[RMDB]
RNA sequence: GGGAACGACUCGAGUAGAGUCGAAAAGAAUCACCGUACCUAUUUAGGUUUACGCUCCAAGAUCGGUGGAUAGCAGCCCUAUCAAUAUCUAGGAGAACUGUGCUAUGUUUAGAAGACUAGGUAGUCUAUUACACAGCCAUGUUCGCAUGGCUGUGAAGCUGUUCUCUAGGUUCGCCUAGAGAACAGCAAAAGAAACAACAACAACAAC
Reactivity to 2A3 in 0.01 (KOAc 150mM, MgCl2 10mM, bicine 150mM(pH8.5), 24C), signal-to-noise 2, nucleotides 027 to 156: g010a010a080u030c000a050c040c010g000u010a030c000c020u090a110u270u270u180a060g000g000u030u040u010a000c010g010c000u000c010c020a050a040g000a060u040c060g050g010u010g040g060a010u020a040g080c070a020g020c000c000c020u070a090u120c010a050a030u050a030u140c010u020a010g000g000a020g020a000a070c100u080g010u050g140c010u090a050u120g010u050u040u030a080g000a210a020g000a070c000u090a040g040g180u070a040g090u010c010u030a110u050u120a010c000a000c000a010g020c000c000a000u000g040u070u090c200g010c100a000u000g000g000c000u010g000u000g000a020a030